[RMDB]
RNA sequence: GGGAACGACUCGAGUAGAGUCGAAAACGAGCGCGUGCUCGACCUGUGUGACCGGGUGGUGACUAUGGUGGACGGGCAACUGCGCGGCUGACCCAUAGAGCGAGUUCGCCUGUGAGGCACGUCCUGAGAGCCCCCGACAGUUCGCUGUCGGGGGCUCAAAAGAAACAACAACAACAAC
Reactivity to 2A3 in 0.01 (KOAc 150mM, MgCl2 10mM, bicine 150mM(pH8.5), 24C), signal-to-noise 1, nucleotides 027 to 126: c010g000a000g000c080g010c090g090u190g000c020u020c040g030a090c000c000u010g030u030g000u020g050a040c020c050g130g260g150u270g010g060u000g070a100c000u060a080u080g090g020u030g060g130a020c020g040g000g030c000a080a050c080u250g020c010g000c020g030g030c030u070g000a120c000c000c000a010u100a040g130a020g070c030g040a040g050u110u130c100g030c020c010u070g010u090g030a180g030g000c020a000c040g040u050c020c090u050g060a020
An RNA of 177 nucleotides, treated with 2A3 and read out base by base. The RNA was probed in 150 mM KOAc, 10 mM MgCl2 and 150 mM bicine (pH 8.5) at 24 C. 2A3 adducts were read by reverse transcription with SuperScript II with manganese. Source: RMDB library OK2TST, as collected in RNAgym. Reactivities are given for positions 27 through 126.